RNA sequence: GGGAACGACUCGAGUAGAGUCGAAAAAGCAAAUAUUCAAGUGGGAUCCUUGAAGACUGAAGUGGGGAAGGGUUCCAUGGUAACAGCAGUUGGACAUGGGUUAGUCGGUCCUAAGAGAUAGGGAACCGUAGACACAUCCUUUCGAGGAUGUGUCUACAAAAGAAACAACAACAACAAC
Reactivity to DMS in 0.01 (KOAc 150mM, MgCl2 10mM, bicine 150mM(pH8.5), 24C), signal-to-noise 2, nucleotides 027 to 126: a030g010c040a080a090a120u010a020u010u020c080a040a160g050u000g010g010g000a130u000c050c010u020u010g020a100a070g000a100c080u020g020a120a080g000u010g030g000g030g000a030a010g000g000g000u000u000c030c010a020u000g030g010u000a050a080c220a070g020c060a100g030u020u010g010g010a060c030a040u000g010g000g010u000u000a010g020u000c030g000g010u000c040c000u000a070a110g000a070g000a070u020a020g000g010g010a090a080c230c080
Reactivity to 2A3 in 0.01 (KOAc 150mM, MgCl2 10mM, bicine 150mM(pH8.5), 24C), signal-to-noise 3, nucleotides 027 to 126: a000g140c130a080a080a020u180a100u140u190c050a110a050g020u040g000g000g000a010u050c000c010u010u030g030a040a040g060a040c120u160g040a070a040g040u130g060g020g020g030a030a010g000g000g000u030u000c000c020a000u030g010g010u150a070a040c040a050g070c020a050g000u060u050g060g030a040c040a140u050g100g000g000u040u050a030g080u060c020g000g000u000c000c000u060a060a020g090a000g010a110u080a070g020g010g000a010a020c070c030